[RMDB]
RNA sequence: GGGAACGACUCGAGUAGAGUCGAAAACUGGAAAGGCUGGCCGGAGAAGGUGAAAGCCCUGUAGACGAAAUCCAGAGUGGGAAUUAGUGGUAUCCUGAGUAAUACAUCACACGUGGAACGAUGUAUGCAGGGCUGGAUGAUUCGUCAUCCAGCCCUGAAAAGAAACAACAACAACAAC
Reactivity to DMS in 0.01 (KOAc 150mM, MgCl2 10mM, bicine 150mM(pH8.5), 24C), signal-to-noise 1, nucleotides 027 to 126: c000u010g000g000a020a040a110g000g000c030u000g000g000c010c040g080g020a150g000a080a140g000g010u040g000a090a090a090g020c000c010c000u010g000u030a060g030a060c010g000a080a060a090u000c000c000a070g000a000g020u000g000g000g010a010a120u010u000a040g010u060g040g050u010a040u000c040c070u010g000a090g030u020a020a000u000a000c060a060u000c000a210c020a090c170g000u050g000g000a090a140c100g010a010u000g090u000a000u000g000
Reactivity to 2A3 in 0.01 (KOAc 150mM, MgCl2 10mM, bicine 150mM(pH8.5), 24C), signal-to-noise 1, nucleotides 027 to 126: c040u010g100g040a000a060a050g030g000c050u040g000g000c000c070g070g060a040g000a010a010g050g130u070g000a130a000a000g060c000c000c000u010g000u000a010g010a000c040g090a000a080a000u020c000c030a140g140a040g100u190g000g050g030a100a090u250u050a020g040u050g000g000u040a180u000c020c080u200g000a090g010u100a050a000u060a000c000a000u000c000a070c000a000c210g080u090g120g000a110a080c190g000a000u010g000u020a020u050g000